[RMDB]
RNA sequence: GGGAACGACUCGAGUAGAGUCGAAAAGAUAUGGACUAUGGACAUGUCCGAAGGGUCGGAAACGACCCUAAGGACAACAGCCCGCUAGUCCUAAGUCAAAAGAGGGGUCAGUUCGCUGACCCCUCAAUCAUGAUCUCAUGUUCGCAUGAGAUCAUGAAAAAGAAACAACAACAACAAC
Reactivity to DMS in 0.01 (KOAc 150mM, MgCl2 10mM, bicine 150mM(pH8.5), 24C), signal-to-noise 3, nucleotides 027 to 126: g000a070u010a300u000g000g000a030c010u000a040u010g010g000a030c050a240u000g000u000c000c000g010a300a050g000g010g000u000c000g040g000a050a100a200c000g010a010c000c000c010u020a000a260g020g000a010c000a030a060c170a110g050c000c000c010g000c220u000a020g010u000c000c000u000a050a090g010u010c030a120a060a110a080g010a010g010g010g010g010u000c000a010g010u000u030c270g010c010u000g000a000c000c000c000c000u000c000a010a030
Conditions: 150 mM KOAc, 10 mM MgCl2 and 150 mM bicine (pH 8.5), 24 C. Structure probing data (DMS) for a 177-nucleotide construct. For DMS, 2,194 sequencing reads were counted. Reactivities are given for positions 27 through 126. For DMS the reverse transcriptase was MarathonRT.